Structure probing data (2A3 and DMS) for a 207-nucleotide construct. The 2A3 profile rests on 4,697 reads.

[RMDB]
RNA sequence: GGGAACGACUCGAGUAGAGUCGAAAAGGGGUCAUCUGGGAGAUCGUCACCAGCUGCCUACUGAAGCCUCCACGGUAGGCAUCAGGCUGCAAGUCGAUCAUCGAUCAGAUGACGGAGGCACCCAAAAUCACUCUGUAGGUUCGCCUACAGAGUGAAAGAUUAAAUUGCAGUUCGCUGCAAUUUAAUCAAAAGAAACAACAACAACAAC
Reactivity to 2A3 in 0.01 (KOAc 150mM, MgCl2 10mM, bicine 150mM(pH8.5), 24C), signal-to-noise 4, nucleotides 027 to 156: g070g010g050g020u000c010a000u000c010u000g010g060g000a120g010a010u020c020g030u030c070a070c170c000a060g000c040u170g010c010c000u000a010c010u030g040a120a020g000c000c000u030c010c000a010c000g000g000u010a010g000g030c010a030u100c040a030g060g000c020u030g000c080a110a290g040u060c010g020a020u040c050a050u280c060g040a050u070c000a010g000a000u000g000a000c020g000g000a000g000g000c000a030c000c010c000a040a060a000a110u020c000a000c000u000c000u000g000u000a000g040g010u070u060c270g090c050c000u000a000c000a000g000a000g000u000g000a000a000a000
Reactivity to DMS in 0.01 (KOAc 150mM, MgCl2 10mM, bicine 150mM(pH8.5), 24C), signal-to-noise 1, nucleotides 027 to 156: g030g000g040g060u030c030a050u000c010u000g020g000g040a090g010a020u010c010g030u010c030a270c160c020a020g020c010u010g020c010c010u000a010c010u040g030a030a100g030c010c000u010c000c000a220c010g020g020u000a010g050g010c110a140u000c160a150g030g030c010u000g090c070a080a190g050u030c030g000a010u000c060a130u000c090g010a220u020c000a040g000a040u020g010a040c000g020g050a000g220g070c000a180c020c030c000a070a070a210a200u000c030a020c010u000c010u000g010u000a010g020g000u000u010c300g030c010c000u010a040c000a000g010a000g020u010g000a000a020a060
For DMS the reverse transcriptase was MarathonRT.
Reactivities are given for positions 27 through 156.
For 2A3 the reverse transcriptase was SuperScript II with manganese.